[RMDB]
RNA sequence: GGGAACGACUCGAGUAGAGUCGAAAACGUGCAUGACCAUCACUUGGAUAGGGGCUCAGGGCUCCUCUUUCCAGAAACCCUCAUGUUGAGAGCAGCAUAAACCAGUGGUUAAAAGCAGGGGCUCUAGUGAUCAACACAAGUUCGCUUGUGUUGAUCAAAAAGAAACAACAACAACAAC
Reactivity to DMS in 0.01 (KOAc 150mM, MgCl2 10mM, bicine 150mM(pH8.5), 24C), signal-to-noise 2, nucleotides 027 to 126: c100g030u000g000c040a050u010g000a100c080c030a060u000c120a090c090u010u010g010g000a070u000a040g000g010g010g030c070u000c140a100g050g020g010c050u010c010c010u010c050u010u000u000c030c020a040g000a070a060a120c060c060c010u000c080a050u000g000u000u000g020a140g000a070g010c040a070g020c030a050u000a060a060a080c060c050a080g000u000g020g000u000u000a070a080a090a100g000c150a040g010g000g010g010c050u010c030u000a070g000